[RMDB]
RNA sequence: GGGAACGACUCGAGUAGAGUCGAAAAGGCUUUGGCUAGUGUAAGGUAUGUCACCGAUGGUCUCAUAGACGUGUCUGACCACUCUUUCUGCAUCUCACUCUCACAUGUGAUGGCCAAGAUAGAGUACACGGUAUAAGUGAUUCGUCACUUAUACCGUAAAAGAAACAACAACAACAAC
Reactivity to 2A3 in 0.01 (KOAc 150mM, MgCl2 10mM, bicine 150mM(pH8.5), 24C), signal-to-noise 9, nucleotides 027 to 126: g060g010c030u090u090u100g040g000c030u040a050g030u020g040u140a080a060g040g020u070a050u120g070u040c020a020c060c040g080a080u080g050g030u030c020u020c060a110u120a070g070a050c060g040u040g030u000c040u040g030a050c010c010a020c020u000c000u010u050u000c010u030g030c010a050u020c030u010c020a020c020u070c010u020c020a080c010a130u120g020u020g020a040u060g070g000c030c020a020a010g020a040u060a010g040a010g030u040a050c040
Reactivity to DMS in 0.01 (KOAc 150mM, MgCl2 10mM, bicine 150mM(pH8.5), 24C), signal-to-noise 9, nucleotides 027 to 126: g010g010c060u000u010u000g010g010c040u000a070g020u000g010u010a080a080g010g010u000a040u010g010u010c060a080c090c080g010a110u000g010g010u000c060u000c070a080u000a100g020a080c100g010u000g010u000c040u000g000a150c100c060a080c030u000c020u000u000u000c020u000g000c070a060u000c110u000c030a030c060u000c100u010c160a090c180a140u010g010u000g000a050u000g000g020c090c070a050a050g000a050u000a030g000a060g010u000a110c200